[RMDB]
RNA sequence: GGGAACGACUCGAGUAGAGUCGAAAACCGAUCCGAGGGGCCCAACCACCAAGUUUGGAGAGCACUUCGGGCCGAAGGGUUGAGUUCUCCCCAGAGGGAGGGAGCCACACGGAGAAAGCGGACAAACGAACACUAGGUAGUUCGCUACCUAGUGUUCAAAAGAAACAACAACAACAAC
Reactivity to 2A3 in 0.01 (KOAc 150mM, MgCl2 10mM, bicine 150mM(pH8.5), 24C), signal-to-noise 1, nucleotides 027 to 126: c010c000g010a070u000c000c010g000a060g040g030g060g000c020c050c020a000a070c010c050a020c010c040a150a070g100u060u070u050g100g000a080g010a030g050c030a040c040u110u050c000g030g030g000c000c000g020a030a050g140g020g000u040u080g030a040g010u080u030c010u030c000c010c000c020a120g150a160g040g000g000a030g000g020g000a020g000c000c000a070c000a010c030g040g020a030g010a010a060a000g130c090g090g020a040c060a040a100a010c080
Reactivity to DMS in 0.01 (KOAc 150mM, MgCl2 10mM, bicine 150mM(pH8.5), 24C), signal-to-noise 2, nucleotides 027 to 126: c010c000g020a100u010c000c010g000a090g030g020g020g010c010c020c030a040a130c040c040a100c080c090a130a110g010u000u000u040g000g000a110g000a070g010c090a030c000u000u010c080g000g030g020c040c000g000a130a160g000g010g000u000u000g000a070g000u000u010c010u000c000c000c010c060a070g020a160g010g000g010a080g020g010g000a050g010c050c040a070c060a140c040g000g000a060g000a060a080a080g010c090g020g000a050c110a020a060a080c220
An RNA of 177 nucleotides, treated with 2A3 and DMS and read out base by base. Reactivities are given for positions 27 through 126. In probing experiments dimethyl sulfate is read out at A N1 and C N3, which are open when not base-paired. For 2A3, 1,224 sequencing reads were counted. The reactions ran in a buffer of 150 mM KOAc, 10 mM MgCl2 and 150 mM bicine (pH 8.5), at 24 C.